[RMDB]
RNA sequence: GGGAACGACUCGAGUAGAGUCGAAAAUGCAGGAACUGUGACAGGUGGUCAGUAUGCUUCCAAGGAGCAGGCUUUGGUUAGGAAGUUCAUGAGGGUCAACAAUCAUGUGGUGUAUAACCAUCAAGAAACGAUCGACGAGUUUCGACUCGUCGAUCGUAAAAGAAACAACAACAACAAC
Reactivity to DMS in 0.01 (KOAc 150mM, MgCl2 10mM, bicine 150mM(pH8.5), 24C), signal-to-noise 1, nucleotides 027 to 126: u000g000c050a040g000g050a130a060c110u000g010u020g020a120c050a170g020g030u000g000g000u010c000a040g030u000a050u030g000c060u000u000c020c060a150a130g000g010a120g000c020a040g000g010c030u000u020u000g020g010u000u000a130g010g000a110a080g000u000u000c100a040u030g020a140g000g000g000u000c140a030a140c100a020a120u010c120a010u000g010u000g000g040u000g000u010a030u000a110a130c040c000a160u000c210a060a120g020a010a070

This 177-nucleotide RNA was probed chemically with DMS. For DMS, 661 sequencing reads were counted. For DMS the reverse transcriptase was MarathonRT. Conditions: 150 mM KOAc, 10 mM MgCl2 and 150 mM bicine (pH 8.5), 24 C. Source: RMDB library OK2TRN, as collected in RNAgym.